[RMDB]
RNA sequence: GGGAACGACUCGAGUAGAGUCGAAAAAAAGAUAUAUAUGGGUCAAGCCUGAGUUCGUACCAAGAACCGACACAGGUGCCCCUAGAUGAAUAGUCUAAGGCGUUUGGGAAUAAUGGAUGUGAGGGAAACCGUGAUAAUUGUUCGCAAUUAUCACGGUAAAAGAAACAACAACAACAAC
Reactivity to DMS in 0.01 (KOAc 150mM, MgCl2 10mM, bicine 150mM(pH8.5), 24C), signal-to-noise 1, nucleotides 027 to 126: a150a070a150g000a110u000a050u010a070u010a120u000g020g030g000u000c090a080a210g000c010c010u020g000a100g030u010u010c050g020u020a210c130c150a090a120g000a150a050c100c040g000a040c070a140c050a000g000g040u000g020c160c020c000c070u000a040g010a030u000g000a090a110u010a050g000u000c010u040a010a080g000g000c080g000u010u000u000g000g000g000a070a030u030a050a070u000g000g010a120u010g000u000g010a040g060g000g000a040a200